[RMDB]
RNA sequence: GGGAACGACUCGAGUAGAGUCGAAAAGAUAUGGAGGUGAAGUGACAUGGAGCUCGGAAACGAGCUUCCAACAGCACUCACCUCCUAAGUCAAAACACCACUAUUGCCUUCGGGCAAUAGUGGUGAACAUUCGAAAUAGCUUCGGCUAUUUCGAAUGAAAAGAAACAACAACAACAAC
Reactivity to DMS in 0.01 (KOAc 150mM, MgCl2 10mM, bicine 150mM(pH8.5), 24C), signal-to-noise 2, nucleotides 027 to 126: g010a020u000a260u020g000g000a010g000g010u000g010a120a070g030u010g000a060c060a220u000g000g000a020g010c000u010c000g000g000a060a060a110c020g030a010g000c010u000u000c000c010a020a040c290a140g000c000a000c020u010c010a000c000c000u000c020c000u000a010a040g000u000c030a080a070a130a180c010a000c010c000a000c010u030a000u000u000g010c000c000u020u010c180g040g010g010c000a010a000u000a000g000u000g010g000u000g000a020a070
Reactivity to 2A3 in 0.01 (KOAc 150mM, MgCl2 10mM, bicine 150mM(pH8.5), 24C), signal-to-noise 1, nucleotides 027 to 126: g000a000u020a020u100g000g000a010g030g000u020g040a240a220g010u020g020a210c040a130u030g010g000a010g010c010u040c020g000g000a050a020a000c000g000a000g040c080u090u000c010c000a000a020c080a030g060c000a010c010u000c000a000c000c000u010c000c000u010a010a000g010u020c000a000a010a050a130c000a000c010c010a010c000u030a020u010u010g040c000c020u110u050c300g150g000g000c000a000a000u000a010g000u000g020g000u000g000a000a000